[RMDB]
RNA sequence: GGGAACGACUCGAGUAGAGUCGAAAACGUGUCCGUCGGCGUAGCCGACAACAUGCCCAGGUAGCCCAGACCUUCAAGGCUACGGUGCGUUGCGACGCACGGUCUGAUUAUUCACAACGACGUUCACAAGAUCGGAUCACUUUCGAGUGAUCCGAAACUGACGGAAACUUUUCGAAGUUUCCGUCAGAAAAGAAACAACAACAACAAC
Reactivity to 2A3 in 0.01 (KOAc 150mM, MgCl2 10mM, bicine 150mM(pH8.5), 24C), signal-to-noise 2, nucleotides 027 to 156: c070g000u010g010u080c130c100g010u010c010g000g070c200g300u190a060g030c000c000g000a000c030a000a000c010a000u070g090c020c000c000a030g010g000u000a000g000c000c080c220a040g010a010c010c000u030u020c000a010a000g000g000c000u010a010c010g000g000u000g000c000g000u030u060g000c140g050a010c000g040c000a000c020g040g000u000c000u000g010a010u020u160a090u160u230c150a060c050a270a120c080g300a020c050g140u130u110c090a080c030a140a110g050a140u000c000g010g010a000u000c000a010c000u000u130u080c170g100a000g020u000g000a010u020c000c000g010a000a000a000

Conditions: 150 mM KOAc, 10 mM MgCl2 and 150 mM bicine (pH 8.5), 24 C. Structure probing data (2A3) for a 207-nucleotide construct. It was measured as part of the RMDB library M2RFPK. 2A3 adducts were read by reverse transcription with SuperScript II with manganese.